[RMDB]
RNA sequence: GGGAACGACUCGAGUAGAGUCGAAAAGCAAUCUGUAAAGAGAGCCGCGUGCCUUCGUGGAAAUCCAGGCUUGGACUGUCGGCUGUGGGGAGAGCUGAUUUUCAGUCUGGCUGGACACAGAGUUCUGUAUUUUUGACGAGUCCAGGUGACUGAGAGAAAAAUCCACCUACUUCGGUAGGUGGAUUUUAAAAGAAACAACAACAACAAC
Reactivity to 2A3 in 0.01 (KOAc 150mM, MgCl2 10mM, bicine 150mM(pH8.5), 24C), signal-to-noise 1, nucleotides 027 to 156: g050c020a020a050u070c020u060g040u270a110a140a050g050a050g000a010g030c010c010g040c040g040u080g020c010c000u020u070c040g060u060g040g070a060a100a070u030c040c010a000g040g040c000u030u030g010g010a020c000u050g030u100c010g050g000c020u040g040u130g070g030g000g000a060g000a030g000c020u020g070a070u100u020u040u010c000a000g020u040c020u050g060g150c010u000g010g020a020c010a010c000a000g040a030g140u110u120c010u030g080u080a220u140u130u030u100u280g040a030c030g020a000g040u020c000c000a020g000g020u020g040a010c010u040g000a000g010a010g040a160

About this RNA:
An RNA of 207 nucleotides, treated with 2A3 and read out base by base.